Source: RMDB library TTRINS, as collected in RNAgym. Structure probing data (DMS) for a 177-nucleotide construct. Reactivities are given for positions 27 through 126. The RNA was probed in 150 mM KOAc, 10 mM MgCl2 and 150 mM bicine (pH 8.5) at 24 C.
[RMDB]
RNA sequence: GGGAACGACUCGAGUAGAGUCGAAAAGAUAUGGACAUACUAGCAACGUGUCUUUCGCGAGGAUCUACCCGCUGGUCGGAAACGACCAUGGUAGGGAGCGAAACACGUUGCUAGUAUGUCCUAAGUCGAUUAUAGCUGUCUUCGGACAGCUAUAAUCAAAAGAAACAACAACAACAAC
Reactivity to DMS in 0.01 (KOAc 150mM, MgCl2 10mM, bicine 150mM(pH8.5), 24C), signal-to-noise 2, nucleotides 027 to 126: g000a060u010a300u020g020g000a010c010a020u000a010c000u000a010g000c000a020a000c000g010u010g010u000c300u000u000u000c020g020c000g000a110g020g010a040u000c000u000a010c000c000c010g000c030u000g000g020u000c000g010g000a140a150a270c010g000a020c000c000a010u000g000g010u000a020g000g000g010a010g040c000g010a000a040a030c010a010c010g000u000u000g000c010u000a000g010u000a000u000g010u000c000c000u000a010a110g010u010c140